Structure probing data (2A3 and DMS) for a 177-nucleotide construct. 2A3 adducts were read by reverse transcription with SuperScript II with manganese. Source: RMDB library OK2TRN, as collected in RNAgym.
[RMDB]
RNA sequence: GGGAACGACUCGAGUAGAGUCGAAAAGCUGACGGAUAACGUGGUGUUAUAGAUAUAUAUGUUACGUCAUAAUAAUAUCAUAGCUCGCGAAAUAUAUAUAUCGUAGCUAAAUUAUUAUCGUCAGCGAGAUUAAUACCCACUUCGGUGGGUAUUAAUCAAAAGAAACAACAACAACAAC
Reactivity to 2A3 in 0.01 (KOAc 150mM, MgCl2 10mM, bicine 150mM(pH8.5), 24C), signal-to-noise 2, nucleotides 027 to 126: g000c000u010g000a000c050g080g060a050u040a030a000c020g010u010g000g080u040g050u080u050a050u090a170g010a020u000a000u000a000u000a020u050g000u000u020a000c000g040u040c080a000u100a070a080u150a060a040u120a090u140c060a070u070a110g060c130u050c110g000c010g000a000a020a000u040a000u000a000u000a000u000a000u090c000g000u020a000g000c000u000a010a040a030u070u070a090u070u010a060u090c000g000u000c000a000g000c010g000a000
Reactivity to DMS in 0.01 (KOAc 150mM, MgCl2 10mM, bicine 150mM(pH8.5), 24C), signal-to-noise 2, nucleotides 027 to 126: g010c000u010g010a050c020g050g030a030u000a000a050c300g020u010g000g010u000g000u000u000a010u010a100g010a050u000a020u010a000u000a010u010g010u010u010a060c020g010u010c080a070u000a060a070u000a070a120u010a190u030c120a110u000a110g020c240u000c240g020c000g010a040a020a000u020a030u010a050u010a030u000a020u000c000g020u000a030g010c020u010a100a070a050u000u000a050u000u000a030u000c020g000u000c020a020g030c000g000a080